[RMDB]
RNA sequence: GGGAACGACUCGAGUAGAGUCGAAAAUACAAGUACGAAAGUACAAGCGUUAUCAGUUGGGCCUUCUGGUCAAAUUAGCGCUCACCCAGGAGGUCCUUCGCAUGAGGUCGACAAGCGCUAAAAGAAACUUAGCACAUAACUUCGGUUAUGUGCUAAGAAAAGAAACAACAACAACAAC
Reactivity to 2A3 in 0.01 (KOAc 150mM, MgCl2 10mM, bicine 150mM(pH8.5), 24C), signal-to-noise 1, nucleotides 027 to 126: u160a000c020a120a030g020u020a010c010g020a110a000a010g030u040a000c000a070a000g020c000g040u040u110a080u210c110a130g100u180u130g000g000g000c000c000u000u000c000u000g010g000u020c030a040a050a100u130u060a000g010c010g030c010u020c050a030c000c000c020a000g000g000a010g040g040u030c000c000u000u030c020g000c000a030u110g080a050g020g130u090c050g010a080c060a080a090g030c020g010c010u030a030a050a000a020g110a040a050a010
Reactivity to DMS in 0.01 (KOAc 150mM, MgCl2 10mM, bicine 150mM(pH8.5), 24C), signal-to-noise 2, nucleotides 027 to 126: u000a090c140a090a250g000u000a020c020g010a150a040a160g000u000a010c010a070a230g030c070g010u010u010a130u010c090a130g000u000u000g030g010g000c000c000u010u000c000u020g000g000u010c090a070a070a090u000u000a050g000c020g020c000u000c110a120c300c000c000a010g000g020a030g000g010u000c010c010u000u000c040g020c110a100u000g000a090g010g000u000c080g010a070c180a080a040g000c020g020c010u000a040a050a090a120g020a100a060a110

This 177-nucleotide RNA was probed chemically with 2A3 and DMS. Reactivities are given for positions 27 through 126. Conditions: 150 mM KOAc, 10 mM MgCl2 and 150 mM bicine (pH 8.5), 24 C. The data come from the RNA Mapping Database (RMDB), library M2PK90. For DMS, 1,460 sequencing reads were counted.